The record gives the reactivity of an RNA of 207 nucleotides to 2A3. Conditions: 150 mM KOAc, 10 mM MgCl2 and 150 mM bicine (pH 8.5), 24 C. Reactivities are given for positions 27 through 156. The 2A3 profile rests on 373 reads.
RNA sequence: GGGAACGACUCGAGUAGAGUCGAAAAUGUAGAGAAUCAGAUGCUGUAGGUCUUGGCGAAGUUUCAACUCUCUUCUUGAUUACCUUACUCAUGAUUAAACCUAAAUAAUUGUACUUUGUAAUAUAAUGAUAUAUAUUUUCACUUUAUCUCAUUUGAGCAUCGUAAUAAGCUUCGGCUUAUUACGAUGAAAAGAAACAACAACAACAAC
Reactivity to 2A3 in 0.01 (KOAc 150mM, MgCl2 10mM, bicine 150mM(pH8.5), 24C), signal-to-noise 1, nucleotides 027 to 156: u170g030u090a020g020a020g000a130a060u050c000a000g110a140u030g000c030u000g070u010a000g010g000u000c020u050u020g000g030c000g020a080a010g010u000u100u100c020a030a080c000u000c000u040c000u070u040c000u000u030g050a030u020u130a140c020c000u010u040a050c040u030c030a080u080g040a050u120u150a110a100a070c020c000u040a130a180a020u090a080a100u110u080g030u060a060c020u160u300u200g010u080a000a130u150a160u090a300a120u090g030a000u020a030u060a040u070a220u210u040u270u200c030a050c010u130u080u170a070u130c060u030c020a120u110u050u240g010a040g070